[RMDB]
RNA sequence: GGGAACGACUCGAGUAGAGUCGAAAACAGAUGUUUCAGUGAGCUGAUACUAUGCCAUUGCAUUCCAGCCUGGGCGACAGAGUGAGACUCCAUCUCAAAAAAAUUAAAAGAAAGAAAGAAAGAAAGUUAAACCUAAAAUUGCCAUGCAAUUGUGCCAAAAUACUAUGGAGUUCGCUCCAUAGUAUUUAAAAGAAACAACAACAACAAC
Reactivity to 2A3 in 0.01 (KOAc 150mM, MgCl2 10mM, bicine 150mM(pH8.5), 24C), signal-to-noise 1, nucleotides 027 to 156: c020a000g020a180u050g050u020u060u030c020a040g020u030g130a040g040c100u070g050a040u030a170c050u120a100u080g020c050c020a050u000u100g010c070a060u040u000c030c030a000g020c010c060u060g000g000g020c010g040a040c020a090g080a010g060u010g020a020g000a030c000u010c010c010a060u010c020u000c000a050a140a020a000a070a050a090u240u190a220a040a030a020g030a020a040a020g000a050a040a040g000a000a110a000g010a000a030a000g010u010u140a060a150a050c020c030u080a050a120a080a120u060u060g000c010c030a010u030g030c000a040a030u070u000g050u030g030c010c090a000
Reactivity to DMS in 0.01 (KOAc 150mM, MgCl2 10mM, bicine 150mM(pH8.5), 24C), signal-to-noise 1, nucleotides 027 to 156: c050a120g030a160u000g010u010u010u000c030a060g030u000g040a050g000c060u010g010a180u000a060c060u010a070u010g020c000c030a180u050u010g030c010a140u020u000c050c050a050g010c030c010u000g010g020g030c030g010a070c030a070g000a090g050u000g010a090g010a040c030u010c030c020a090u010c030u010c010a000a020a070a090a050a100a120u010u000a040a030a050a090g010a050a050a060g010a070a050a110g000a080a010a110g020a030a070a090g000u000u000a020a060a110c070c050u000a020a070a050a080u000u000g020c040c010a070u010g000c030a030a070u000u010g000u000g030c100c020a090
The record gives the reactivity of an RNA of 207 nucleotides to 2A3 and DMS. For 2A3 the reverse transcriptase was SuperScript II with manganese. Conditions: 150 mM KOAc, 10 mM MgCl2 and 150 mM bicine (pH 8.5), 24 C. The data come from the RNA Mapping Database (RMDB), library OK3TST.